The data come from the RNA Mapping Database (RMDB), library OK2TST.
The record gives the reactivity of an RNA of 177 nucleotides to 2A3 and DMS.
RNA sequence: GGGAACGACUCGAGUAGAGUCGAAAAGCAUUUCCUCAUAUUCCAGGUGGGACAUGCAGUUAAAAUGUGCAGAUUUUACUCUGUCCAUCUUGUGGGCCAGAGGACAAGUGCAGCAGGCUGCUGUGUGCCAAUACGAUGCGUUCGCGCAUCGUAUUGGAAAAGAAACAACAACAACAAC
Reactivity to 2A3 in 0.01 (KOAc 150mM, MgCl2 10mM, bicine 150mM(pH8.5), 24C), signal-to-noise 4, nucleotides 027 to 126: g060c030a040u020u040u060c010c000u050c030a090u100a100u150u040c020c010a050g040g070u110g040g090g020a020c000a020u060g000c020a000g020u090u190a090a070a080a090u080g010u050g000c030a040g090a300u030u020u020u110a020c010u000c010u020g020u020c010c010a020u070c100u190u300g080u160g050g010g010c070c040a010g010a000g000g040a020c030a070a010g040u000g030c010a050g090c000a010g040g060c050u020g010c010u020g030u000g050u050g020
Reactivity to DMS in 0.01 (KOAc 150mM, MgCl2 10mM, bicine 150mM(pH8.5), 24C), signal-to-noise 3, nucleotides 027 to 126: g010c120a100u000u000u000c020c000u020c120a090u010a150u010u010c040c060a110g000g040u010g010g010g030a050c040a040u000g000c060a010g020u000u020a050a040a140a060u000g000u000g020c090a050g000a190u000u000u000u000a170c010u000c000u000g010u000c040c000a030u010c170u020u010g000u000g000g000g010c120c040a020g040a030g000g000a040c300a030a030g020u000g020c020a050g020c080a050g010g000c180u000g010c020u000g010u000g020u010g000

Background
The reactions ran in a buffer of 150 mM KOAc, 10 mM MgCl2 and 150 mM bicine (pH 8.5), at 24 C. Values cover nucleotides 27 to 126. For DMS the reverse transcriptase was MarathonRT. For 2A3 the reverse transcriptase was SuperScript II with manganese.